[RMDB]
RNA sequence: GGGAACGACUCGAGUAGAGUCGAAAAGACGAACGAAAACACAAAUGUUCCACGGUGCAGAAGGGUCCCUCACAUGAGGAUCACCCAUGUAACUCGGACAGGAUAUGCAUUUGGGAAAAAGAGAGAAUCAAAAACACUAAUUCGUUAGUGUUUUUGAAAAAGAAACAACAACAACAAC
Reactivity to 2A3 in 0.01 (KOAc 150mM, MgCl2 10mM, bicine 150mM(pH8.5), 24C), signal-to-noise 8, nucleotides 027 to 126: g070a010c060g040a110a020c030g040a030a020a090a010c100a010c020a020a060a050u060g020u120u010c010c000a020c020g010g000u020g000c010a020g040a290a120g080g000g000u010c020c020c000u010c010a230c050a170u300g010a010g020g020a040u130c020a030c020c000c000a010u030g000u010a120a080c020u030c140g030g030a030c060a070g040g010a070u090a050u300g000c020a020u010u030u070g030g010g050a040a070a010a100a000g110a010g010a010g040a040a050
Reactivity to DMS in 0.01 (KOAc 150mM, MgCl2 10mM, bicine 150mM(pH8.5), 24C), signal-to-noise 9, nucleotides 027 to 126: g010a110c080g010a090a100c080g010a070a070a110a100c090a070c050a040a070a070u010g010u000u000c010c010a100c100g000g010u000g010c010a030g000a110a140g020g000g000u000c100c000c020u000c020a130c200a090u010g000a020g010g000a060u000c190a030c000c010c000a080u000g010u000a030a050c050u010c120g010g010a060c130a060g000g000a080u010a060u010g010c020a030u000u000u000g010g010g000a030a040a050a060a090g000a100g010a090g000a080a120

Overview:
Chemical mapping of a 177-nucleotide RNA with 2A3 and DMS. Conditions: 150 mM KOAc, 10 mM MgCl2 and 150 mM bicine (pH 8.5), 24 C. Values cover nucleotides 27 to 126. The DMS profile rests on 11,531 reads.